[RMDB]
RNA sequence: GGGAACGACUCGAGUAGAGUCGAAAACCGUUGAUCUUCGGAUCAACGGAAAUAAAAGCUCACGACCUGAAAUAAACAAGAGCAAGGCAGGAAAAUAAAUAAAAACGUGGGACUUCGGUCCCACGAACUACGUAUGAAUCUUCGGAUUCAUACGUAGAAAAGAAACAACAACAACAAC
Reactivity to DMS in 0.01 (KOAc 150mM, MgCl2 10mM, bicine 150mM(pH8.5), 24C), signal-to-noise 2, nucleotides 027 to 126: c010c020g010u000u000g020a010u000c010u020u020c190g000g010a030u000c000a010a000c000g000g000a010a080a050u000a070a070a100a160g020c040u000c000a030c120g000a110c010c000u010g000a050a100a050u010a110a110a050c150a090a100g020a040g010c030a040a050g010g000c040a040g000g000a110a020a070a060u010a030a080a100u010a050a010a130a090a140c000g000u010g000g000g000a000c010u000u030c150g030g000u000c000c000c010a000c020g000a030a060
Reactivity to 2A3 in 0.01 (KOAc 150mM, MgCl2 10mM, bicine 150mM(pH8.5), 24C), signal-to-noise 2, nucleotides 027 to 126: c020c000g000u000u000g020a000u000c010u040u070c270g130g000a000u010c010a000a000c010g010g020a000a000a000u050a000a050a000a000g010c010u010c020a060c070g060a140c000c020u040g050a090a100a040u120a060a140a050c060a060a130g010a000g090c030a030a030g040g000c070a030g090g000a060a080a030a070u140a040a080a010u110a060a060a070a010a000c000g000u000g000g000g000a000c000u010u040c190g090g000u000c000c000c020a010c000g000a000a000